[RMDB]
RNA sequence: GGGAACGACUCGAGUAGAGUCGAAAAGGAUAACCCAGUGGGAGGUCAGCCGCUAAGACGAUAACCUUGCUUCGGUUCUCCACACCAGCGGGACCGGUGCCUGGUACGAAUCCUGGGGUCGUCGUUGUCAUCAGUGUGGUUUCGACCACACUGAUGAAAAAGAAACAACAACAACAAC
Reactivity to 2A3 in 0.01 (KOAc 150mM, MgCl2 10mM, bicine 150mM(pH8.5), 24C), signal-to-noise 3, nucleotides 027 to 126: g080g010a070u040a130a080c000c000c010a000g030u110g040g000g000a010g030g010u060c040a020g070c030c010g020c060u070a090a020g020a050c030g030a020u080a140a040c000c010u000u060g030c000u090u060c010g010g000u060u030c020u020c030c000a060c000a040c010c060a030g060c050g020g010g010a020c000c000g020g020u030g020c010c010u010g030g000u050a060c040g070a040a020u020c010c000u010g000g010g010g000u010c010g010u010c010g020u040u080g060
Reactivity to DMS in 0.01 (KOAc 150mM, MgCl2 10mM, bicine 150mM(pH8.5), 24C), signal-to-noise 4, nucleotides 027 to 126: g020g010a070u020a140a140c060c000c050a120g020u020g010g000g000a110g000g010u000c060a090g000c050c020g010c060u010a080a070g020a110c060g000a070u020a060a040c020c000u020u010g000c050u010u010c070g000g000u010u000c070u010c080c050a110c110a090c200c160a080g000c130g010g010g010a030c020c010g010g010u010g000c030c030u000g000g010u000a110c120g000a110a080u010c040c010u000g000g010g010g010u000c020g010u010c010g010u010u020g000